[RMDB]
RNA sequence: GGGAACGACUCGAGUAGAGUCGAAAAGCUGGACCAGCAUGCCUCGACCCAGGUGUCCAUCAGCGGGCUGUAUGACAUGAGCCUGCAGAUAUAUCGGACGCUGCGCGUGGACGAGACCCGCAGUCGGCUGAUGCAUUGCGAGUGCGGCGAGUCUCACCACAGCUAGUACUUUCGAGUACUAGCUGUGAAAAGAAACAACAACAACAAC
Reactivity to 2A3 in 0.01 (KOAc 150mM, MgCl2 10mM, bicine 150mM(pH8.5), 24C), signal-to-noise 3, nucleotides 027 to 156: g020c020u030g030g090a090c060c040a020g020c020a060u080g000c020c010u020c020g100a140c010c020c030a070g000g040u030g000u000c000c010a020u030c050a070g000c020g000g020g030c020u010g060u140a170u200g220a120c090a130u220g040a000g010c000c000u010g000c030a000g020a010u120a000u060a050u200c080g030g000a000c000g000c020u060g000c070g000c050g050u120g030g040a060c080g030a040g040a010c020c010c020g000c000a010g170u060c030g080g040c050u080g030a060u140g050c100a090u050u300g010c030g020a050g090u010g020c010g020g000c040g020a060g020u020c000u010c000a030c000
Reactivity to DMS in 0.01 (KOAc 150mM, MgCl2 10mM, bicine 150mM(pH8.5), 24C), signal-to-noise 1, nucleotides 027 to 156: g020c020u030g000g030a040c020c040a220g000c060a180u010g020c040c000u000c040g020a090c030c030c050a230g050g050u010g010u000c000c030a150u000c060a250g020c000g010g020g080c000u010g010u000a060u010g010a180c180a160u020g020a080g000c000c000u000g020c000a050g020a090u020a050u000a110u000c030g080g050a050c010g030c010u000g010c260g020c130g000u040g050g020a160c090g000a190g000a150c000c010c020g000c030a110g020u000c040g050g000c020u000g020a080u010g030c050a070u000u010g030c020g010a120g010u000g010c050g010g010c010g000a150g000u000c010u020c000a300c150